Chemical mapping of a 207-nucleotide RNA with 2A3 and DMS. The data come from the RNA Mapping Database (RMDB), library RNAMAK. Conditions: 150 mM KOAc, 10 mM MgCl2 and 150 mM bicine (pH 8.5), 24 C. Reactivities are given for positions 27 through 156.

[RMDB]
RNA sequence: GGGAACGACUCGAGUAGAGUCGAAAAGGGGUCACGAUUGAUGGUCACGGUCAGAGCAACAGCCUGAAGCCUCCACGGGACAUGCUCUACGUGACCUAAAUCGUGACGGAGGCACCCAAAACUGGGAUGGUAGUAGUUCGCUACUACCAUCCCAGAACAACCUAAUAUGCUUCGGCAUAUUAGGUUGAAAAGAAACAACAACAACAAC
Reactivity to 2A3 in 0.01 (KOAc 150mM, MgCl2 10mM, bicine 150mM(pH8.5), 24C), signal-to-noise 3, nucleotides 027 to 156: g100g010g020g000u010c000a000c000g010a010u000u060g060a120u300g000g000u020c010a010c010g060g100u220c190a000g000a000g030c020a030a160c040a080g030c000c000u070g040a140a060g030c020c030u080c060c020a050c020g000g000g020a030c110a150u090g000c000u010c000u020a020c010g010u000g000a000c000c000u000a000a000a000u000c000g000u010g000a000c000g000g000a010g020g000c030a070c010c010c020a030a050a000a080c010u010g000g000g010a000u000g000g010u000a000g000u000a000g010u010u090c260g040c110u000a010c000u010a000c000c000a010u000c000c000c000a000g000a000a000
Reactivity to DMS in 0.01 (KOAc 150mM, MgCl2 10mM, bicine 150mM(pH8.5), 24C), signal-to-noise 1, nucleotides 027 to 156: g000g040g000g030u000c000a040c010g010a080u000u000g000a250u000g010g030u000c000a020c040g020g010u000c100a080g020a070g020c000a080a120c080a170g000c020c020u010g020a080a120g000c000c000u010c040c040a280c000g000g030g000a110c050a300u010g000c000u010c010u000a050c000g020u010g000a000c000c010u030a020a040a010u010c010g050u000g010a010c000g030g040a060g010g040c050a200c010c000c020a060a080a040a200c000u010g020g020g010a020u000g020g030u000a010g010u000a020g010u000u020c300g010c000u000a010c000u000a000c000c000a000u000c000c000c010a030g030a000a160